Structure probing data (DMS) for a 177-nucleotide construct. Values are in units of 0.01, from 0 to 300, in steps of 10. It was measured as part of the RMDB library OK2TRN. Conditions: 150 mM KOAc, 10 mM MgCl2 and 150 mM bicine (pH 8.5), 24 C.
RNA sequence: GGGAACGACUCGAGUAGAGUCGAAAAUCGGGUGGAAGAACGGCUUUGGUUACAUCAUGCUAAAUUCGAGCAUCGUUAAAGUGAGCUGGAAUGGUGAAUUAGUGUUCAACAAAAUUGGAAAUGGGAAAGCAUCGAGUAUCUUCGGAUACUCGAUGCUAAAAGAAACAACAACAACAAC
Reactivity to DMS in 0.01 (KOAc 150mM, MgCl2 10mM, bicine 150mM(pH8.5), 24C), signal-to-noise 1, nucleotides 027 to 126: u000c040g010g000g040u000g010g020a130a060g020a120a080c120g000g000c010u000u000u000g000g000u000u000a050c150a120u000c090a020u010g000c030u010a050a050a160u020u020c140g040a030g020c020a060u000c070g000u010u000a040a090a060g000u000g000a040g000c000u030g010g000a110a030u000g000g000u010g000a070a040u000u000a070g010u000g020u000u020c040a060a080c110a070a030a110a140u000u000g040g010a010a080a010u000g030g000g000a150a090